The record gives the reactivity of an RNA of 207 nucleotides to DMS and 2A3. 2A3 adducts were read by reverse transcription with SuperScript II with manganese. DMS adducts were read by reverse transcription with MarathonRT. The DMS profile rests on 14,777 reads. For 2A3, 25,359 sequencing reads were counted.
[RMDB]
RNA sequence: GGGAACGACUCGAGUAGAGUCGAAAAAGGGACACCUCACUCACAUUUUACCAACAGAGUGAGAGUGAGGUUAACCUCUCAUUUCUGUUGGUGAACGCAGAAGUUAGAGGUUGAGAUCACUGACAACUGCGUUCAUAGUUGUGAGUGAUCUGUCCCAAUUAAUUACUCGUUUCGACGAGUAAUUAAUAAAAGAAACAACAACAACAAC
Reactivity to DMS in 0.01 (KOAc 150mM, MgCl2 10mM, bicine 150mM(pH8.5), 24C), signal-to-noise 4, nucleotides 027 to 156: a100g010g000g020a040c000a040c010c020u000c000a030c000u000c000a060c020a060u000u000u000u000a300c030c030a030a040c030a060g010a060g020u010g010a040g010a020g020u000g020a090g030g020u000u000a060a150c120c000u000c000u000c020a020u000u000u000c010u000g040u000u010g020g040u000g000a020a050c050g010c020a030g010a040a300g010u000u000a030g000a080g030g010u000u010g010a140g010a080u000c020a160c010u000g000a040c010a020a300c010u000g020c050g020u010u010c050a090u000a060g010u000u010g030u000g000a040g030u000g010a010u000c030u000g010u000c010c000c000a040
Reactivity to 2A3 in 0.01 (KOAc 150mM, MgCl2 10mM, bicine 150mM(pH8.5), 24C), signal-to-noise 9, nucleotides 027 to 156: a000g010g000g000a000c000a000c000c010u000c000a000c000u030c000a010c000a020u080u140u100u180a030c000c000a000a000c000a000g010a000g000u010g010a010g010a010g010u110g020a090g080g080u070u080a040a040c020c000u000c000u000c000a050u180u300u020c000u000g000u000u010g010g020u010g010a000a000c000g000c000a000g000a060a010g020u010u020a030g010a050g090g040u020u050g030a090g020a040u080c010a010c060u010g000a000c000a030a020c010u000g010c020g020u020u010c010a020u100a040g110u040u030g000u000g000a000g000u000g000a000u000c000u000g000u000c000c000c000a000

The reactions ran in a buffer of 150 mM KOAc, 10 mM MgCl2 and 150 mM bicine (pH 8.5), at 24 C.